[RMDB]
RNA sequence: GGGAACGACUCGAGUAGAGUCGAAAAACUCCGCGUUACGACGCGGAGAAGCUAGAAACCUUGCCUGAGAUGUGCUGAUGAAUUUCAGUCAUUGUUUCUGGUAGUACACCUCACUACGGUGAGGUGAUAAGAAGAAGACCUUCGGGUCUUCUUCUUAAAAAGAAACAACAACAACAAC
Reactivity to DMS in 0.01 (KOAc 150mM, MgCl2 10mM, bicine 150mM(pH8.5), 24C), signal-to-noise 4, nucleotides 027 to 126: a080c000u000c000c000g020c000g010u000u010a080c160g020a030c010g010c000g000g000a000g000a020a050g000c000u000a010g010a020a020a020c000c010u000u000g000c110c000u000g000a020g020a000u000g010u010g000c080u020g000a110u010g010a130a020u000u010u000c000a000g010u000c000a020u000u010g010u000u000u010c000u000g000g010u000a080g010u010a210c020a010c000c010u000c000a010c000u000a140c190g010g010u000g000a000g000g020u010g000a020
Reactivity to 2A3 in 0.01 (KOAc 150mM, MgCl2 10mM, bicine 150mM(pH8.5), 24C), signal-to-noise 5, nucleotides 027 to 126: a000c000u000c010c010g000c010g010u030u020a140c300g000a000c000g030c000g040g000a000g010a000a000g000c010u010a000g000a010a010a000c000c010u020u020g010c010c000u010g000a010g000a030u070g080u180g150c190u140g070a250u150g100a140a120u020u030u000c010a010g000u010c000a010u000u000g000u000u000u000c000u000g010g000u010a050g020u030a070c000a000c020c000u000c000a000c000u030a030c220g110g000u000g000a000g000g000u010g000a000
Source information
Source: RMDB libraries RFM100 and RFMREP, as collected in RNAgym. This 177-nucleotide RNA was probed chemically with DMS and 2A3. 2A3 adducts were read by reverse transcription with SuperScript II with manganese. DMS adducts were read by reverse transcription with MarathonRT. The RNA was probed in 150 mM KOAc, 10 mM MgCl2 and 150 mM bicine (pH 8.5) at 24 C.